Conditions: 150 mM KOAc, 10 mM MgCl2 and 150 mM bicine (pH 8.5), 24 C. This 177-nucleotide RNA was probed chemically with DMS and 2A3. For DMS the reverse transcriptase was MarathonRT. The 2A3 profile rests on 617 reads. It was measured as part of the RMDB library OK2TRN. Values cover nucleotides 27 to 126.

[RMDB]
RNA sequence: GGGAACGACUCGAGUAGAGUCGAAAACGAGCUUCCAUUAUUGACGAAGCAAUUGGAAAUGUUAUUAGAAAAGACGGUUUGUCUUUCUCUGAGAAGGCGAUGAGAAAGGAUUUGCAUGAUUUGGGGAGUCCUCACACAAUUUCGAUUGUGUGAGGACAAAAGAAACAACAACAACAAC
Reactivity to DMS in 0.01 (KOAc 150mM, MgCl2 10mM, bicine 150mM(pH8.5), 24C), signal-to-noise 2, nucleotides 027 to 126: c060g000a180g010c030u000u010c000c050a070u020u020a140u010u000g010a090c150g010a070a000g010c020a100a120u020u010g010g000a040a080a120u030g000u010u010a150u010u010a040g000a040a040a060a020g010a010c030g020g000u000u000u030g010u000c010u000u000u010c080u000c030u000g000a180g010a050a070g000g010c060g000a080u000g000a080g000a050a050a100g000g000a020u000u000u000g030c080a080u000g010a100u000u000u010g030g010g000g010a210
Reactivity to 2A3 in 0.01 (KOAc 150mM, MgCl2 10mM, bicine 150mM(pH8.5), 24C), signal-to-noise 1, nucleotides 027 to 126: c060g020a010g000c000u000u010c000c020a050u180u140a080u120u290g200a060c050g030a090a020g040c000a030a040u150u060g030g050a030a050a110u090g030u120u040a170u210u090a060g040a040a060a010a000g030a000c030g170g120u120u110u110g000u010c000u000u000u070c000u000c010u040g020a060g030a060a120g120g120c000g110a100u070g030a000g060a000a030a000g000g060a050u090u110u090g070c060a070u010g080a030u100u100u150g050g000g000g000a060